[RMDB]
An RNA of 177 nucleotides, treated with DMS and 2A3 and read out base by base. High 2A3 reactivity points to a flexible backbone, as in loops and unpaired stretches. Values cover nucleotides 27 to 126. DMS adducts were read by reverse transcription with MarathonRT. Conditions: 150 mM KOAc, 10 mM MgCl2 and 150 mM bicine (pH 8.5), 24 C.
RNA sequence: GGGAACGACUCGAGUAGAGUCGAAAAAUGGUAGACCAAAACCCAACCAUUGCAAGUGAAGAAAUGACAUGACCUGAGUCACAUUAGCAGGACUGCUGAGCACUGUGGGGAGAACAGAUAUGGGCAGACUUUCGUAUUCGUUCGCGAAUACGAAAGUAAAAGAAACAACAACAACAAC
Reactivity to DMS in 0.01 (KOAc 150mM, MgCl2 10mM, bicine 150mM(pH8.5), 24C), signal-to-noise 2, nucleotides 027 to 126: a040u020g020g020u000a110g020a090c070c040a060a060a100a110c070c000c010a100a140c070c030a040u010u010g000c100a120a060g000u010g000a090a060g010a040a060a100u000g010a050c030a080u010g000a080c030c070u000g020a140g010u000c050a040c090a060u000u000a080g010c060a060g020g000a070c070u000g000c040u000g000a090g060c040a060c030u000g040u010g010g000g020g010a120g010a060a070c040a060g000a040u000a040u000g010g010g010c040a090g010
Reactivity to 2A3 in 0.01 (KOAc 150mM, MgCl2 10mM, bicine 150mM(pH8.5), 24C), signal-to-noise 1, nucleotides 027 to 126: a000u070g010g070u040a040g020a240c040c000a010a010a090a120c030c000c000a010a030c000c000a080u050u040g050c070a070a070g030u030g120a100a070g090a090a220a030u100g060a050c040a090u150g090a110c000c020u080g010a050g090u120c010a020c000a150u060u100a020g070c030a000g000g070a070c020u040g020c020u000g000a010g000c000a030c090u040g010u080g050g000g000g000a040g000a000a000c020a030g080a080u130a060u140g030g040g000c040a030g050